[RMDB]
Conditions: 150 mM KOAc, 10 mM MgCl2 and 150 mM bicine (pH 8.5), 24 C. Chemical mapping of a 170-nucleotide RNA with DMS and 2A3. For DMS, 3,189 sequencing reads were counted. For 2A3, 2,737 sequencing reads were counted.
RNA sequence: GGGAACGACUCGAGUAGAGUCGAAAACUGGUAGUGAUCUUCUUUACCAACCACCCAACUGUAGCAUAACCUCUGGCGUGUUGCAAAGCGGUUUGGUGAAAAUGUCACAUCCCAGUGGAGAUGUUGAAGCGCGCGGAGUUCGCUCCGCGCAAAAGAAACAACAACAACAAC
Reactivity to DMS in 0.01 (KOAc 150mM, MgCl2 10mM, bicine 150mM(pH8.5), 24C), signal-to-noise 2, nucleotides 027 to 129: c050u040g010g000u000a300g010u030g010a030u020c000u000u000c160u010u000u070a050c040c000a030a010c130c040a090c000c080c030a270a120c090u020g000u000a060g060c000a020u010a210a230c000c020u070c100u020g040g060c200g040u030g000u000u080g000c010a000a130a160g020c070g040g010u000u000u070g000g100u030g000a000a090a000a000u030g000u000c010a000c040a130u050c240c060c000a020g000u000g070g040a000g000a030u010g020u030u020g000a000a140g000c030
Reactivity to 2A3 in 0.01 (KOAc 150mM, MgCl2 10mM, bicine 150mM(pH8.5), 24C), signal-to-noise 3, nucleotides 027 to 129: c000u000g040g000u060a100g010u000g010a020u040c090u030u010c010u000u000u000a010c000c000a070a000c000c000a010c020c020c000a060a030c050u000g000u030a000g000c030a000u030a120a260c000c000u190c060u270g050g000c040g020u020g000u010u010g000c000a000a060a060g050c150g010g000u000u050u060g010g020u020g020a000a060a000a000u000g010u020c000a020c000a110u110c000c000c000a000g000u010g030g040a130g000a020u090g050u080u040g110a090a010g110c040